[RMDB]
RNA sequence: GGGAACGACUCGAGUAGAGUCGAAAAGAUAUGGAUCUAGUGGGAGGACCUCCCGUCGGAAACGACGGGCCCGGGUCCUUUGAUCACUAGAGUCCUAAGUCAAAACUUGACACUUCGGUGUCAAGAACCUUGGUAUCUUCUUCGGAAGAUACCAAGGAAAAGAAACAACAACAACAAC
Reactivity to DMS in 0.01 (KOAc 150mM, MgCl2 10mM, bicine 150mM(pH8.5), 24C), signal-to-noise 2, nucleotides 027 to 126: g000a030u000a040u040g000g000a190u000c000u000a040g000u000g000g000g030a010g030g000a010c010c020u000c000c000c000g010u000c000g020g040a060a010a040c010g040a000c030g000g010g000c300c030c040g000g020g010u000c000c010u000u000u010g000a010u020c010a000c000u000a000g000a070g000u000c000c000u000a000a030g000u000c000a140a080a050a160c000u000u000g000a000c040a000c000u000u030c230g020g010u000g000u000c000a000a000g000a070a120
Source: RMDB library TTRDEL, as collected in RNAgym. Structure probing data (DMS) for a 177-nucleotide construct. The RNA was probed in 150 mM KOAc, 10 mM MgCl2 and 150 mM bicine (pH 8.5) at 24 C. For DMS the reverse transcriptase was MarathonRT.